Notes: An RNA of 207 nucleotides, treated with DMS and 2A3 and read out base by base.
[RMDB]
RNA sequence: GGGAACGACUCGAGUAGAGUCGAAAAUUGGCGAAUGCCUGUGGAUCUACAUUUGUUGCGGGUUCGAGACCCGUCAGAGCCCGGCUCUGUAGCUCAAUGGUAGAGCGGUGUAAUCACAUAAACUUGUAAAAGACACGUGCCUUCGGGCACGUGUCAACCUAAUGAAAGUGUUCGCACUUUCAUUAGGAAAAGAAACAACAACAACAAC
Reactivity to DMS in 0.01 (KOAc 150mM, MgCl2 10mM, bicine 150mM(pH8.5), 24C), signal-to-noise 2, nucleotides 027 to 156: u000u010g010g010c030g000a080a040u020g030c010c040u010g070u010g010g020a050u000c010u000a030c010a030u010u000u020g040u010u000g030c010g010g020g010u020u000c040g010a300g000a080c000c010c020g000u000c040a050g000a100g000c050c120c070g020g030c000u000c040u010g010u000a050g050c000u000c020a050a080u000g020g010u000a050g010a050g040c010g020g020u000g010u000a030a090u000c030a120c030a080u000a070a090a100c070u000u010g020u010a080a070a060a140g000a060c000a000c010g020u010g000c000c010u000u000c300g020g000g000c000a000c010g030u020g010u000c000a010a030
Reactivity to 2A3 in 0.01 (KOAc 150mM, MgCl2 10mM, bicine 150mM(pH8.5), 24C), signal-to-noise 4, nucleotides 027 to 156: u060u030g020g000c030g150a300a070u300g010c000c020u020g020u050g070g020a050u030c050u100a010c020a030u020u030u170g050u040u030g020c000g000g020g000u000u020c000g010a010g020a040c000c010c000g020u010c000a000g000a010g000c100c300c110g120g000c000u000c000u010g020u020a000g010c000u010c010a020a070u170g300g040u170a020g000a010g010c010g000g010u010g000u000a020a010u040c010a010c010a140u130a070a090a080c080u080u120g050u120a030a070a010a040g010a000c000a000c010g000u010g000c010c000u030u080c210g020g000g010c020a000c000g000u000g000u010c000a000a000
For 2A3, 2,472 sequencing reads were counted. It was measured as part of the RMDB library M2RFPK. The reactions ran in a buffer of 150 mM KOAc, 10 mM MgCl2 and 150 mM bicine (pH 8.5), at 24 C. For 2A3 the reverse transcriptase was SuperScript II with manganese. For DMS the reverse transcriptase was MarathonRT.